An RNA of 207 nucleotides, treated with 2A3 and read out base by base.
It was measured as part of the RMDB library M2RFPK.
Reactivities are given for positions 27 through 156.
2A3 adducts were read by reverse transcription with SuperScript II with manganese.
RNA sequence: GGGAACGACUCGAGUAGAGUCGAAAAAGCCACCGCUACGGCGGUGGCAAGUAGAAAAGUUGGUGCUUAGACCACGCCCUCUACCGUAAUAAUAGAUAAAUUGGCGAGUAUCAGUACGCUGAUACAAAAAACACUCACACGUUCGCGUGUGAGUGAACUCCAUGAAGAUCUUCGGAUCUUCAUGGAGAAAAGAAACAACAACAACAAC
Reactivity to 2A3 in 0.01 (KOAc 150mM, MgCl2 10mM, bicine 150mM(pH8.5), 24C), signal-to-noise 1, nucleotides 027 to 156: a000g000c000c040a000c000c000g010c000u040a020c300g140g010c000g030g010u000g000g090c000a010a030g000u000a000g020a000a040a020a000g010u030u020g030g020u060g070c180u290u160a020g060a050c010c000a000c040g010c030c030c000u040c010u010a010c070c000g070u050a030a030u050a090a080u080a230g150a070u230a100a170a040u160u100g000g000c060g050a080g030u000a000u020c010a000g010u040a040c270g000c120u000g020a020u050a010c130a000a170a000a000a000a000c000a000c000u000c040a000c000a000c000g010u050u030c190g010c040g110u010g000u060g000a000g000u000g000a000a000